[RMDB]
Source: RMDB library TTRDEL, as collected in RNAgym. Chemical mapping of a 177-nucleotide RNA with 2A3 and DMS. Values cover nucleotides 27 to 126. For 2A3 the reverse transcriptase was SuperScript II with manganese. Conditions: 150 mM KOAc, 10 mM MgCl2 and 150 mM bicine (pH 8.5), 24 C. For 2A3, 3,099 sequencing reads were counted.
RNA sequence: GGGAACGACUCGAGUAGAGUCGAAAAGAUAUGGAGGUGGCUCGCACGCAUUAAGUGUCGGAAACGACUCAAAUGCGUGAACUACGAGGCCACCUCCUAAGUCAAAAGACACAGUUCGCUGUGUCAACCAACCAAUCAUCUUCGGAUGAUUGGUUGGAAAAGAAACAACAACAACAAC
Reactivity to 2A3 in 0.01 (KOAc 150mM, MgCl2 10mM, bicine 150mM(pH8.5), 24C), signal-to-noise 1, nucleotides 027 to 126: g030a040u080a080u130g000g010a000g020g020u000g000g040c010u000c000g070c040a000c000g020c000a000u020u040a300a210g060u040g000u040c000g020g000a060a070a030c020g010a020c010u030c040a000a040a000u000g010c010g000u010g000a010a000c040u120a040c070g000a080g010g020c000c000a000c000c010u000c000c000u000a010a000g000u000c020a000a010a000a050g000a000c000a000c010a000g060u140u160c180g040c150u010g000u000g000u030c000a000a030
Reactivity to DMS in 0.01 (KOAc 150mM, MgCl2 10mM, bicine 150mM(pH8.5), 24C), signal-to-noise 1, nucleotides 027 to 126: g010a020u040a300u010g000g010a030g010g070u000g010g000c000u000c000g000c000a010c020g000c000a020u010u000a040a100g010u010g000u000c000g000g000a120a090a230c000g000a030c000u000c020a080a050a000u000g010c000g000u000g000a070a050c150u040a300c010g040a020g010g000c010c010a000c010c000u000c000c000u000a030a050g000u040c020a070a060a170a080g000a010c020a010c000a000g010u000u000c190g000c000u000g000u000g000u000c010a030a140